[RMDB]
RNA sequence: GGGAACGACUCGAGUAGAGUCGAAAAGAUAUGGAGGCUCGAUAAGUCCAGGGUCGGAAACGACCCGGACUUUUGACGAGCCCUCCUAAGUCAAACUAAGACGGGCUGUUCGCAGCCCGUCUUAGAACAUGAUUAAUUCGUUCGCGAAUUAAUCAUGAAAAGAAACAACAACAACAAC
Reactivity to 2A3 in 0.01 (KOAc 150mM, MgCl2 10mM, bicine 150mM(pH8.5), 24C), signal-to-noise 1, nucleotides 027 to 126: g030a000u040a040u120g000g020a000g000g050c000u000c030g020a060u060a090a060g000u020c090c130a250g000g000g000u000c010g020g040a160a040a000c000g030a000c030c090c040g000g000a010c030u050u030u040u020g080a030c030g000a000g020c050c000c010u010c010c000u020a090a010g040u030c020a040a080a120c000u010a000a010g000a010c000g020g000g000c040u050g050u170u180c300g080c200a020g020c000c000c000g000u000c000u000u000a000g000a000a000
Reactivity to DMS in 0.01 (KOAc 150mM, MgCl2 10mM, bicine 150mM(pH8.5), 24C), signal-to-noise 3, nucleotides 027 to 126: g000a040u000a300u000g000g000a060g000g000c000u000c000g010a160u000a030a020g000u000c000c010a080g050g000g010u000c010g000g010a080a040a180c010g010a010c000c010c010g000g010a010c000u010u000u010u000g000a140c120g010a020g010c090c030c000u000c000c000u010a040a130g000u000c020a120a150a260c000u000a000a000g000a010c000g010g030g010c000u000g000u000u020c210g020c010a010g010c010c000c010g000u000c000u000u000a000g000a090a230